[RMDB]
RNA sequence: GGGAACGACUCGAGUAGAGUCGAAAAAGCGCGAGCCGGAUGCUUCAGUCUGGCUGCGCGCUAAACCUCGCCUGACACUACCGGAUGUGCCGCAGGCAAAACGGGUAGCUGAUGUGCUCAGCGGCACCGAGAAUUCAGAGUUCGCUCUGAAUUCUCGAAAAGAAACAACAACAACAAC
Reactivity to 2A3 in 0.01 (KOAc 150mM, MgCl2 10mM, bicine 150mM(pH8.5), 24C), signal-to-noise 2, nucleotides 027 to 126: a000g020c010g000c000g000a000g010c010c000g000g020a000u020g030c170u270u260c130a050g000u010c010u010g000g000c010u010g020c010g000c000g000c010u010a020a000a000c010c000u010c050g000c010c030u050g020a050c000a040c080u110a100c030c070g150g040a160u130g050u020g010c020c020g070c030a050g060g000c020a050a000a000a000c060g000g010g040u090a130g060c040u050g020a110u160g100u080g060c040u040c090a030g000c010g030g020c030a010c020
Reactivity to DMS in 0.01 (KOAc 150mM, MgCl2 10mM, bicine 150mM(pH8.5), 24C), signal-to-noise 3, nucleotides 027 to 126: a010g010c000g040c010g020a040g020c010c000g020g010a020u000g000c290u010u010c300a130g000u010c000u000g030g010c000u000g010c010g050c020g000c010u010a020a110a120c050c020u000c070g000c030c010u000g010a140c090a090c040u010a070c040c050g000g010a130u010g010u010g020c020c020g000c020a300g000g020c020a040a020a080a120c090g020g000g020u010a100g000c080u000g030a100u010g010u010g000c030u020c050a090g010c020g000g000c030a030c030